[RMDB]
Notes
An RNA of 177 nucleotides, treated with 2A3 and read out base by base.
RNA sequence: GGGAACGACUCGAGUAGAGUCGAAAAUUUAAUACACCUAAUCUAAGGAACAUCAUAGCUUAGCCUAGCCUGCUUUUUUUUUUUUUUUUUUUGGAGACAGAGUCUCACUCUGUCACCCAGGCUGGAGAGGAACAGGGAAAUUCGUUUCCCUGUUCCUAAAAGAAACAACAACAACAAC
Reactivity to 2A3 in 0.01 (KOAc 150mM, MgCl2 10mM, bicine 150mM(pH8.5), 24C), signal-to-noise 1, nucleotides 027 to 126: u060u050u080a100a030u100a050c070a050c040c010u040a050a060u020c010u010a020a000g080g000a110a150c070a130u070c010a130u070a070g090c000u020u020a010g030c000c020u000a010g080c010c020u000g050c050u050u000u050u030u080u050u010u020u000u000u000u000u000u000u040u000u020u050u040g030g000a050g000a000c000a000g000a010g080u030c040u000c150a050c010u000c000u000g000u000c000a010c000c020c000a000g000g020c000u000g000g000a100g000
2A3 is a SHAPE reagent: it acylates the 2'-hydroxyl of flexible nucleotides of all four kinds.
Source: RMDB library OK1LIB, as collected in RNAgym.
Reactivities are given for positions 27 through 126.
The reactions ran in a buffer of 150 mM KOAc, 10 mM MgCl2 and 150 mM bicine (pH 8.5), at 24 C.